[RMDB]
RNA sequence: GGGAACGACUCGAGUAGAGUCGAAAAUCGAGCUGGACGGCAUUGUGCUCGCUGACACCCGAUCGCCCGUUCUGCUAUUCGAAACCGGGAUACCCACAAGGUAUUACAUCGAUCCGGCCGACAUCGCCACACUGUGCUGAUUCGUCAGCACAGUGUGAAAAGAAACAACAACAACAAC
Reactivity to DMS in 0.01 (KOAc 150mM, MgCl2 10mM, bicine 150mM(pH8.5), 24C), signal-to-noise 4, nucleotides 027 to 126: u010c040g010a050g000c030u000g010g020a090c040g000g000c090a140u000u000g020u010g020c060u000c030g020c070u000g010a140c070a060c050c080c020g010a050u000c110g010c080c020c040g000u000u000c040u000g000c030u000a080u000u000c030g020a060a100a120c040c030g020g000g000a020u000a030c000c010c050a090c300a100a300g010g000u000a010u000u000a110c170a100u000c150g000a070u010c020c030g010g030c040c020g010a060c170a070u000c140g000c080
Reactivity to 2A3 in 0.01 (KOAc 150mM, MgCl2 10mM, bicine 150mM(pH8.5), 24C), signal-to-noise 2, nucleotides 027 to 126: u050c010g000a030g010c000u020g010g020a020c000g020g000c070a080u040u210g060u090g060c070u070c070g040c040u090g050a030c010a040c050c000c000g030a100u060c060g030c040c020c000g000u020u020c020u030g000c020u040a080u070u150c040g060a070a050a070c030c010g000g000g010a030u030a020c000c010c010a130c040a090a010g000g030u020a020u020u100a100c080a070u130c060g070a070u000c010c010g000g030c020c010g020a030c020a100u060c030g030c100